Structure probing data (DMS and 2A3) for a 207-nucleotide construct.
The RNA was probed in 150 mM KOAc, 10 mM MgCl2 and 150 mM bicine (pH 8.5) at 24 C.
For 2A3 the reverse transcriptase was SuperScript II with manganese.
Source: RMDB library M2RFPK, as collected in RNAgym.
2A3 is a SHAPE reagent: it acylates the 2'-hydroxyl of flexible nucleotides of all four kinds.
Values are in units of 0.01, from 0 to 300, in steps of 10.
RNA sequence: GGGAACGACUCGAGUAGAGUCGAAAAAGAUCCACGCUACGGCGUGGAUCACACGUUCAUCCCUAUUGGGACGCAAGUAGGCAUAGUGCCGAAGGAACGCAUUAGUCAUGCGCUACGGCGCAUGACACACAUCAGAGUCACUUCGGUGACUCUGAAAUCCUUUUCAAAAGUUCGCUUUUGAAAAGGAAAAAGAAACAACAACAACAAC
Reactivity to DMS in 0.01 (KOAc 150mM, MgCl2 10mM, bicine 150mM(pH8.5), 24C), signal-to-noise 3, nucleotides 027 to 156: a090g010a020u000c010c010a020c000g040c000u000a050c190g100g030c000g060u000g000g000a000u000c020a060c080a020c060g020u000u000c010a150u010c010c000c020u000a140u020u000g020g010g020a040c030g020c070a080a100g010u000a140g000g020c030a200u010a120g020u000g000c000c020g000a120a160g030g010a070a060c030g010c060a080u000u000a080g020u000c030a010u000g020c000g020c000u000a080c280g060g010c000g000c010a000u010g020a010c000a020c130a060c110a100u000c010a000g010a010g040u000c010a000c000u000u010c300g050g010u000g010a010c000u010c010u000g010a000a070a070
Reactivity to 2A3 in 0.01 (KOAc 150mM, MgCl2 10mM, bicine 150mM(pH8.5), 24C), signal-to-noise 5, nucleotides 027 to 156: a000g000a000u000c000c000a000c000g010c010u030a050c300g150g000c000g000u000g000g010a000u000c000a000c000a000c000g010u020u010c020a050u050c010c020c000u100a300u130u290g010g000g010a010c050g000c090a080a020g010u010a010g010g000c050a110u090a230g180u180g160c000c010g010a000a000g060g020a030a000c020g010c100a090u050u220a020g000u000c000a000u000g000c010g000c010u030a040c260g110g000c000g000c000a000u000g000a000c000a000c000a000c000a060u050c000a000g000a000g000u000c000a000c000u030u080c140g060g000u000g000a000c000u000c000u000g000a000a000a000